[RMDB]
RNA sequence: GGGAACGACUCGAGUAGAGUCGAAAACAACUUCCCUUCGGGGAAGUUGAACCAUUCCCAAAUUCCACCUUGGUGAUGGCACCCGGAGAGGAGCCAUCACGACUCCGAGAGCCUUCGGGCUCUCGAACACGCAAUACUGGUUCGCCAGUAUUGCGUGAAAAGAAACAACAACAACAAC
Reactivity to DMS in 0.01 (KOAc 150mM, MgCl2 10mM, bicine 150mM(pH8.5), 24C), signal-to-noise 1, nucleotides 027 to 126: c010a010a000c000u000u000c000c000c000u010u010c180g020g020g000g000a000a020g000u010u000g070a040a120c190c180a230u010u000c010c010c000a060a050a170u010u010c120c060a070c210c090u000u010g020g020u020g010a000u000g000g020c000a010c010c000c010g020g000a170g000a170g000g020a020g020c000c000a010u000c020a000c000g000a120c100u010c120c010g020a020g000a000g010c000c000u000u000c100g000g010g010c010u000c000u000c000g000a010a120
Reactivity to 2A3 in 0.01 (KOAc 150mM, MgCl2 10mM, bicine 150mM(pH8.5), 24C), signal-to-noise 2, nucleotides 027 to 126: c000a000a000c010u000u000c000c010c030u030u010c240g000g010g000g000a020a000g020u000u000g000a020a000c020c010a050u010u020c010c000c000a030a050a020u150u010c070c030a090c010c040u050u190g210g000u000g020a010u010g010g000c030a060c040c050c090g300g110a180g040a300g180g000a000g000c000c010a000u000c000a000c010g000a010c030u050c100c010g010a010g000a000g000c000c020u070u080c220g030g000g000c000u000c020u000c000g000a000a000